Chemical mapping of a 177-nucleotide RNA with DMS. The reactions ran in a buffer of 150 mM KOAc, 10 mM MgCl2 and 150 mM bicine (pH 8.5), at 24 C.
RNA sequence: GGGAACGACUCGAGUAGAGUCGAAAAGAUAUUAACGCGCGUGCUGUGUCUAACGCGAAUUACCCUGUUAUUUUCGACUUUACUCGAGUCGUUAUAGCGUGAUAUGACACAGUUAUCCGCGAACGAAGUAAUUAGCCACUUUCGAGUGGCUAAUUACAAAAGAAACAACAACAACAAC
Reactivity to DMS in 0.01 (KOAc 150mM, MgCl2 10mM, bicine 150mM(pH8.5), 24C), signal-to-noise 1, nucleotides 027 to 126: g000a230u030a080u000u010a030a060c140g000c010g030c040g020u000g010c030u000g010u000g000u000c010u010a050a040c000g000c020g010a080a040u000u010a140c090c040c120u000g010u000u010a120u000u000u000u010c000g000a020c010u000u000u000a010c000u010c000g000a010g020u010c000g000u000u000a020u010a150g000c000g010u000g010a010u000a040u000g000a030c010a010c030a030g000u000u000a040u000c030c000g020c000g010a070a120c120g020a150a190